[RMDB]
RNA sequence: GGGAACGACUCGAGUAGAGUCGAAAACUUACUUGCAUUGAUUCAACUUUUAAUUGGCAACACCGUAUUCUGCUGGUGAGAGCAAGAGAGGGCGUGUGGAUCCCUGUGUCCAUGGACCGACCGUGGGUCCAGCGAAGAGAUUCGUCUCUUCGCUGGAAAAAGAAACAACAACAACAAC
Reactivity to DMS in 0.01 (KOAc 150mM, MgCl2 10mM, bicine 150mM(pH8.5), 24C), signal-to-noise 3, nucleotides 027 to 126: c040u020u020a110c020u000u010g000c050a120u040u000g000a080u020u020c120a030a070c130u000u050u030u030a070a220u000u000g000g000c010a090a090c050a040c030c010g000u040a080u000u010c080u000g010c050u000g030g060u000g000a070g030a120g020c030a020a010g000a220g030a080g000g020g020c070g070u060g020u000g000g010a100u030c010c010c000u000g010u000g000u040c000c050a050u020g020g000a180c110c140g010a080c030c050g010u000g000g000g000
Reactivity to 2A3 in 0.01 (KOAc 150mM, MgCl2 10mM, bicine 150mM(pH8.5), 24C), signal-to-noise 2, nucleotides 027 to 126: c010u020u070a030c010u010u030g070c030a110u030u070g090a100u140u190c070a150a090c060u110u150u110u190a160a130u060u110g060g000c020a090a000c000a100c080c000g040u020a120u140u060c050u100g080c040u050g000g070u100g060a100g010a020g010c060a100a020g060a000g030a060g030g020g000c020g050u190g010u050g040g040a050u030c000c000c000u020g050u050g010u040c040c000a000u030g070g010a020c000c050g050a060c010c010g070u010g010g000g020